[RMDB]
RNA sequence: GGGAACGACUCGAGUAGAGUCGAAAACAUAGCCGCCGUCCUCACCGGCGCCCGCGUAGUGCACAACGUCGUUGUACCGCAUCGGACCACCGCGAACGUCGGGCUCGGCUGACGGCGCGGUGCCAUCAUAGCUGGCACCUUUCGAGGUGCCAGCUAUAAAAGAAACAACAACAACAAC
Reactivity to 2A3 in 0.01 (KOAc 150mM, MgCl2 10mM, bicine 150mM(pH8.5), 24C), signal-to-noise 1, nucleotides 027 to 126: c000a000u240a180g080c030c000g080c050c000g020u000c000c000u000c040a010c000c000g000g000c070g060c040c000c000g120c000g050u070a170g020u010g020c030a000c060a170a000c090g170u080c120g080u060u000g030u070a080c020c000g040c100a160u060c030g030g020a000c100c000a050c000c000g070c000g000a200a120c000g090u120c070g000g020g000c000u030c070g120g020c000u000g070a000c100g000g000c020g000c020g000g000u070g000c000c000a150u190c000